[RMDB]
RNA sequence: GGGAACGACUCGAGUAGAGUCGAAAACAUCUGGCAGCUUUCCGGUGGUCAACGUCAGCGGGUGGGGAUUGCUCGUGCGCUGGCGGCGAAUCCCCAGCUGUUAUUACUCGACGAACCGUUUGGUGCAAAAAUGAUUAUUAUUCGUAAUAAUCAUUUUAAAAGAAACAACAACAACAAC
Reactivity to DMS in 0.01 (KOAc 150mM, MgCl2 10mM, bicine 150mM(pH8.5), 24C), signal-to-noise 9, nucleotides 027 to 126: c080a080u010c090u000g010g010c030a050g010c040u000u010u000c140c060g020g020u000g020g010u000c040a050a150c090g010u000c090a060g010c010g010g000g020u000g000g000g010g010a090u000u000g010c020u000c040g020u000g000c050g020c070u000g000g010c030g000g010c120g010a050a070u000c010c000c000c030a050g010c010u000g010u000u010a060u010u010a070c080u000c140g010a050c050g000a080a080c040c010g010u000u000u010g020g010u000g010c090a030
Reactivity to 2A3 in 0.01 (KOAc 150mM, MgCl2 10mM, bicine 150mM(pH8.5), 24C), signal-to-noise 6, nucleotides 027 to 126: c010a050u050c050u060g070g000c020a040g060c050u040u110u080c070c030g030g010u070g010g020u040c040a060a030c030g010u010c020a000g010c010g020g050g100u020g000g010g010g030a120u010u150g070c040u040c130g030u060g050c080g020c090u050g080g000c000g000g010c010g060a010a040u020c010c000c010c000a010g030c010u000g010u010u010a010u020u050a040c020u010c030g020a030c030g020a090a040c000c020g030u030u090u090g030g010u050g000c010a000